[RMDB]
RNA sequence: GGGAACGACUCGAGUAGAGUCGAAAAGUUCGAACUCAAGAAGAGAAGAUUUUCGAGGAAAUACUCCCAAGAAGUUCCCGGAGGGAUCCAAGAGACGGACGACUUUCCCCUAUUGGUUGGGAAAAGUGAAGGGCGAUCUUCGGAUCGCCCAAAAGAAACAACAACAACAAC
Reactivity to 2A3 in 0.01 (KOAc 150mM, MgCl2 10mM, bicine 150mM(pH8.5), 24C), signal-to-noise 1, nucleotides 027 to 129: g000u000u070c000g080a140a010c010u000c030a040a050g120a190a010g000a060g010a080a000g000a000u010u030u000u020c040g000a010g050g040a000a190a000u020a010c050u000c030c040c000a000a060g000a020a000g000u000u000c000c000c000g000g050a000g020g000g000a000u030c000c000a020a000g000a000g040a000c000g040g140a000c020g030a000c080u010u010u010c000c010c000c000u050a140u280u300g100g040u100u100g000g000g000a000a000a000a000g070u150g050a100a040